[RMDB]
RNA sequence: GGGAACGACUCGAGUAGAGUCGAAAAGGUUCGAGAUUCGUCUCGAACCAAAUAAAUUCAGCGGUAAAUAAUUAGCUCCCGUUACCGCUGAACGGGAGCAUAUGGUCACUUGUUUCGACAAGUGAAAUCUUAACUGCAUGUUCGCAUGCAGUUAAGAAAAAGAAACAACAACAACAAC
Reactivity to 2A3 in 0.01 (KOAc 150mM, MgCl2 10mM, bicine 150mM(pH8.5), 24C), signal-to-noise 2, nucleotides 027 to 126: g000g010u000u000c000g000a000g000a030u030u110c170g070u000c080u000c000g000a000a000c000c000a010a000a000u030a010a020a010u030u010c020a000g010c000g210g230u200a070a070a040u040a020a110u130u150a050g000c010u040c000c000c000g000u000u000a220c010c000g000c030u000g010a000a000c000g010g000g000a000g000c010a020u130a070u070g200g030u020c000a000c010u030u000g050u050u090u090c210g070a000c010a010a000g000u000g000a020a030a020
Reactivity to DMS in 0.01 (KOAc 150mM, MgCl2 10mM, bicine 150mM(pH8.5), 24C), signal-to-noise 1, nucleotides 027 to 126: g000g010u000u000c000g020a030g000a030u000u000c180g030u010c000u000c000g010a000a010c000c000a000a020a060u000a060a100a170u000u000c000a010g010c010g020g000u000a020a020a030u020a030a040u010u020a150g000c010u000c000c000c000g030u000u010a080c040c000g010c000u000g000a010a020c020g000g000g000a030g020c010a100u010a020u020g010g040u010c000a010c000u000u000g020u000u000u030c160g040a020c000a010a000g030u000g000a010a050a110